[RMDB]
RNA sequence: GGGAACGACUCGAGUAGAGUCGAAAAGACGCUCGGUGCGUGGCCGCAGCCGGCCGUGCGCACGCGGAUCUGUCUCGCGCCGCCCGAGCAGCCGCGCGCGGCCGACCUGUGGGUCGCCAUCGCGGGAAGUGCUAUUAUAGUUCGCUAUAAUAGCACUAAAAGAAACAACAACAACAAC
Reactivity to DMS in 0.01 (KOAc 150mM, MgCl2 10mM, bicine 150mM(pH8.5), 24C), signal-to-noise 9, nucleotides 027 to 126: g010a160c070g010c060u000c060g040g040u000g010c160g040u000g020g010c000c010g000c020a030g010c100c010g000g000c000c010g020u000g010c080g020c100a090c170g020c060g000g010a090u010c020u000g000u010c000u000c010g010c150g010c050c050g000c040c070c000g000a020g000c010a020g000c020c010g010c000g000c020g010c010g000g000c010c000g000a020c160c030u000g010u000g030g080g010u000c000g000c010c010a010u000c010g010c070g000g000g010a140
Reactivity to 2A3 in 0.01 (KOAc 150mM, MgCl2 10mM, bicine 150mM(pH8.5), 24C), signal-to-noise 7, nucleotides 027 to 126: g090a030c040g030c140u070c100g050g010u020g020c120g020u010g000g010c010c000g000c010a000g000c020c000g000g000c000c010g010u020g010c060g020c020a050c080g080c050g000g010a070u080c010u030g190u110c010u000c010g010c040g040c040c070g050c020c030c000g000a000g000c000a000g020c010c020g000c000g000c000g000c000g000g010c000c000g000a010c000c010u010g010u070g250g030g000u010c000g000c010c000a010u020c010g010c030g020g020g040a080

An RNA of 177 nucleotides, treated with DMS and 2A3 and read out base by base. Reactivities are given for positions 27 through 126. The DMS profile rests on 33,345 reads. For 2A3 the reverse transcriptase was SuperScript II with manganese. The 2A3 profile rests on 40,412 reads. Conditions: 150 mM KOAc, 10 mM MgCl2 and 150 mM bicine (pH 8.5), 24 C.